Chemical mapping of a 177-nucleotide RNA with 2A3 and DMS. High 2A3 reactivity points to a flexible backbone, as in loops and unpaired stretches. The 2A3 profile rests on 1,494 reads. Source: RMDB libraries RFM100 and RFMREP, as collected in RNAgym. DMS (dimethyl sulfate) methylates the pairing face of unpaired adenines and cytosines. For DMS the reverse transcriptase was MarathonRT.

[RMDB]
RNA sequence: GGGAACGACUCGAGUAGAGUCGAAAAAAAAGAAAAUCCUGGCCAUAGUAGCAGCGUUAGUCGGGUAAGAAUCCCGAUGGCCGAAAGAGCAAGGGUUCCUCGGCAAUGCUUAUCAGCCGAGGGUUAGCUUAAGUCCUUUUUUCGAAAAGGACUUAAGAAAAGAAACAACAACAACAAC
Reactivity to 2A3 in 0.01 (KOAc 150mM, MgCl2 10mM, bicine 150mM(pH8.5), 24C), signal-to-noise 2, nucleotides 027 to 126: a000a000a000a000g210a030a070a000a000u140c030c040u030g000g000c000c000a080u020a160g120u040a050g000c030a020g010c020g110u040u050a070g020u050c000g000g020g000u050a120a080g070a060a090u090c000c000c000g000a040u040g010g070c000c000g010a030a110a030g070a010g030c050a010a030g010g080g000u030u060c000c000u000c000g000g030c020a020a080u020g030c100u180u190a080u170c020a000g130c000c000g030a000g000g010g000u020u030a010g020
Reactivity to DMS in 0.01 (KOAc 150mM, MgCl2 10mM, bicine 150mM(pH8.5), 24C), signal-to-noise 7, nucleotides 027 to 126: a050a010a070a080g010a090a080a040a030u010c010c010u000g000g010c000c020a110u020a110g010u010a060g020c080a100g000c100g010u020u020a100g030u000c010g000g000g020u010a090a110g010a170a100u030c000c000c000g010a010u000g010g000c010c020g000a070a070a110g000a090g000c060a070a060g000g010g010u010u010c000c010u000c000g000g000c000a090a070u020g000c110u020u020a090u030c120a140g000c000c000g000a010g010g000g000u010u020a050g000